[RMDB]
RNA sequence: GGGAACGACUCGAGUAGAGUCGAAAAAUUACGGCAUAUUACGUAGCGCCGCGCGUAAUAUAUAUUACGCGGCAUGCUACGAUCGCGUACGUAAUGCAUCGUAUAUAAUAUCGUAAUAUAUCGCGCGUAGUAACAACUCCUUCGGGAGUUGUUACUAAAAAGAAACAACAACAACAAC
Reactivity to DMS in 0.01 (KOAc 150mM, MgCl2 10mM, bicine 150mM(pH8.5), 24C), signal-to-noise 2, nucleotides 027 to 126: a060u000u000a020c010g000g020c120a040u000a030u010u000a060c000g000u010a090g060c090g020c060c050g000c030g030c090g000u000a010a100u000a160u000a100u010a020u000u000a000c010g010c000g010g030c030a030u010g030c030u000a000c000g000a020u000c260g020c110g000u000a030c180g010u000a100a050u000g030c090a020u010c010g000u010a020u000a080u000a080a090u000a040u000c030g000u010a020a030u000a020u010a080u000c090g000c060g020c130g000